[RMDB]
RNA sequence: GGGAACGACUCGAGUAGAGUCGAAAAGACGCUGAUGCGAUCGACUGUAAGAUAGAUACACUGAGGAGACAGAUACGUACGGCAAGUAUCGUCGCCAGAAGUACAGUCGCAAAUUGCCGUACGAAGAGCAGGUAGGUACUUUCGAGUACCUACCUGCAAAAGAAACAACAACAACAAC
Reactivity to 2A3 in 0.01 (KOAc 150mM, MgCl2 10mM, bicine 150mM(pH8.5), 24C), signal-to-noise 4, nucleotides 027 to 126: g050a000c050g020c080u120g040a090u290g040c030g040a070u040c010g020a000c000u010g020u070a100a030g030a180u200a050g070a060u170a160c140a030c090u150g070a080g030g020a030g030a010c010a080g030a050u050a090c000g050u010a000c000g010g040c000a000a010g000u000a020u070c000g010u000c010g040c020c000a060g050a120a020g070u030a000c000a000g010u000c000g000c050a050a060a120u030u020g000c000c000g010u020a070c040g050a040a030g030a000
Reactivity to DMS in 0.01 (KOAc 150mM, MgCl2 10mM, bicine 150mM(pH8.5), 24C), signal-to-noise 1, nucleotides 027 to 126: g050a000c020g040c000u000g020a080u040g060c130g000a010u000c100g090a030c010u000g000u000a000a020g000a080u020a020g000a080u040a080c210a200c020u010g000a230g000g000a070g000a100c020a110g000a060u030a060c060g020u020a000c030g060g000c020a060a000g000u000a020u000c000g000u000c030g010c000c000a050g000a020a060g070u000a010c080a000g000u150c000g000c300a010a030a170u000u010g000c000c010g030u000a000c050g020a130a040g000a230